Conditions: 150 mM KOAc, 10 mM MgCl2 and 150 mM bicine (pH 8.5), 24 C. An RNA of 207 nucleotides, treated with 2A3 and DMS and read out base by base.
RNA sequence: GGGAACGACUCGAGUAGAGUCGAAAAGAAAGAAAGAAGCGAGCUGGCGCAGCCUCACGGGCAACCGUCAAUCCAGCACUUCACAAGUCUUGUCGUUCUGACAGGACAUCCAUCAACCCACCGGGAAAAAAGGACUACAGCUUCGGCUGUAGUCCAACACAAGAGAUAUCUUCGGAUAUCUCUUGUGAAAAGAAACAACAACAACAAC
Reactivity to 2A3 in 0.01 (KOAc 150mM, MgCl2 10mM, bicine 150mM(pH8.5), 24C), signal-to-noise 4, nucleotides 027 to 156: g040a000a050a010g040a020a120a000g030a060a000g010c080g060a010g000c020u000g020g010c030g010c060a020g000c020c040u050c030a040c090g030g040g000c060a090a070c070c010g070u080c050a020a040u050c010c000a000g020c020a040c010u070u060c030a040c040a200a020g000u000c000u000u000g000u000c010g110u270u230c150u290g000a010c000a000g000g000a000c000a010u000c000c010a050u070c030a050a160c000c010c040a030c140c140g040g020g010a030a070a020a020a010a140g010g000a050c000u000a000c000a000g010c000u050u130c220g120g000c000u010g010u000a000g000u000c010c000a000a000
Reactivity to DMS in 0.01 (KOAc 150mM, MgCl2 10mM, bicine 150mM(pH8.5), 24C), signal-to-noise 1, nucleotides 027 to 156: g000a120a080a240g000a070a120a190g020a010a010g020c040g040a190g000c060u010g010g040c050g010c060a250g040c010c000u020c070a060c160g020g030g000c070a110a170c100c000g010u000c070a040a090u000c010c020a050g010c030a120c000u000u000c010a090c140a140a190g020u000c010u010u010g030u000c000g010u010u000c160u000g000a010c070a010g050g020a020c000a030u010c000c080a040u000c010a120a140c040c000c020a080c050c060g000g000g010a010a060a040a160a150a150g050g000a020c000u020a020c030a020g020c010u010u020c300g000g000c000u010g000u020a010g060u000c020c000a000a070
2A3 adducts were read by reverse transcription with SuperScript II with manganese.